[RMDB]
RNA sequence: GGGAACGACUCGAGUAGAGUCGAAAACCUAGAUUCGUCUAGGCAACACCUUUGUGUGGUGGGACAGGGAGCAACCUCGGGAGCACCCAUUGGGUGCUCAUUUGCGAGGAUCUGUCCGUAACAUCCACACUCUGGUUAUCGGAGGUUUCGACCUCCGCGAGUACCCUGGAUUCGUCCAGGGUACUCGAAAAGAAACAACAACAACAAC
Reactivity to 2A3 in 0.01 (KOAc 150mM, MgCl2 10mM, bicine 150mM(pH8.5), 24C), signal-to-noise 2, nucleotides 027 to 156: c000c000u010a000g010a020u040u050c250g020u020c080u000a000g010g030c000a130a000c020a000c120c000u000u020u000g010u000g000u000g060g030u000g000g000g000a020c000a010g000g070g110a170g240c060a100a140c000c000u030c020g030g020g000a000g000c010a000c000c010c170a300u160u300g010g000g000u000g000c000u000c020a010u130u080u190g110c000g000a000g010g000a040u010c000u000g020u010c000c000g000u000a010a000c020a200u030c000c000a000c000a000c000u000c010u030g030g040u110u100a090u130c020g000g030a000g030g040u040u190u160c160g120a120c000c010u010c010c000g030